[RMDB]
This 177-nucleotide RNA was probed chemically with DMS and 2A3. The reactions ran in a buffer of 150 mM KOAc, 10 mM MgCl2 and 150 mM bicine (pH 8.5), at 24 C.

RNA sequence: GGGAACGACUCGAGUAGAGUCGAAAAACACCGCCCACCUCCAGCUGUGGAGCUAACUCCCGCUGGGAGGACAUCGGUAGGUGGGCAGUUUGGGUGGGGCGCCACUCCCCCGAAAAGGUAUCGGGGGCACCCCAUUACACUUCGGUGUAAUGGGGUGAAAAGAAACAACAACAACAAC
Reactivity to DMS in 0.01 (KOAc 150mM, MgCl2 10mM, bicine 150mM(pH8.5), 24C), signal-to-noise 1, nucleotides 027 to 126: a060c090a080c090c060g040c000c000c010a050c020c000u000c010c010a120g000c010u000g010u000g030g020a050g000c180u000a090a170c010u000c010c000c020g020c230u020g050g010g000a050g000g000a050c180a050u010c080g000g020u000a030g000g020u010g000g000g010c030a010g000u000u000u010g000g010g020u020g000g000g010g010c050g010c020c040a100c120u000c040c000c000c000c010g010a040a010a110a100g000g020u000a110u000c010g000g000g010g000g020
Reactivity to 2A3 in 0.01 (KOAc 150mM, MgCl2 10mM, bicine 150mM(pH8.5), 24C), signal-to-noise 1, nucleotides 027 to 126: a000c010a000c040c040g000c000c000c000a000c000c000u020c020c000a000g050c040u030g020u300g230g100a040g030c060u070a060a150c010u000c000c000c070g170c150u190g030g050g010a010g030g040a030c040a060u070c070g030g030u070a050g010g030u020g000g000g080c010a010g000u040u110u100g070g020g010u060g000g000g000g040c070g040c050c000a040c020u090c000c000c000c000c000g020a080a110a010a050g250g010u190a080u060c000g000g010g000g050g060
For 2A3 the reverse transcriptase was SuperScript II with manganese. The DMS profile rests on 838 reads.